Chemical mapping of a 207-nucleotide RNA with 2A3 and DMS.
The RNA was probed in 150 mM KOAc, 10 mM MgCl2 and 150 mM bicine (pH 8.5) at 24 C.
RNA sequence: GGGAACGACUCGAGUAGAGUCGAAAACGCUUGAUUCGUCAAGCGAUCUUGGGGUCGGACGUUUGACGGACAUGCUGGUGUACUGAAGCCUCCACGGUACACGCAGCAACAGCCCGAGUCCGACGGAGGCACCCGUAUAUGUGUAUUCGUACACAAACAUAAUCUAGUCGUUCGCGACUAGAUUAUGAAAAGAAACAACAACAACAAC
Reactivity to 2A3 in 0.01 (KOAc 150mM, MgCl2 10mM, bicine 150mM(pH8.5), 24C), signal-to-noise 7, nucleotides 027 to 156: c020g000c010u020u000g000a040u070u080c210g030u020c150a000a000g010c000g050a070u030c090u090u210g090g000g060g010u000c010g000g010a010c040g140u090u170u280g150a110c050g000g010a040c070a180u260g000c000u000g020g000u010g000u000a000c000u010g020a090a030g000c000c000u020c000c000a010c000g000g010u000a000c000a010c140g160c020a000g000c020a040a150c060a090g040c000c000c010g000a030g000u000c000c000g010a020c010g000g000a000g000g000c000a010c010c010c010g100u130a180u050a080u280g020u010g030u000a040u030u150c240g030u100a010c010a000c000a040a090a010
Reactivity to DMS in 0.01 (KOAc 150mM, MgCl2 10mM, bicine 150mM(pH8.5), 24C), signal-to-noise 2, nucleotides 027 to 156: c040g010c010u010u000g000a050u000u010c280g000u010c000a000a010g020c000g020a010u000c010u010u010g010g010g020g040u000c000g020g010a040c010g020u000u000u020g040a200c000g030g030a030c020a250u010g050c020u010g020g000u010g010u000a000c000u010g020a040a110g000c010c010u000c000c000a300c060g010g000u010a010c000a030c000g000c060a010g060c030a080a060c100a090g030c020c000c010g040a190g000u000c000c010g020a020c000g000g040a070g090g030c010a080c010c030c030g020u000a130u000a090u000g000u000g020u010a020u000u010c240g020u000a010c000a030c010a080a140a240
Source: RMDB library RNAMAK, as collected in RNAgym. For 2A3, 7,347 sequencing reads were counted. For 2A3 the reverse transcriptase was SuperScript II with manganese. For DMS, 3,775 sequencing reads were counted.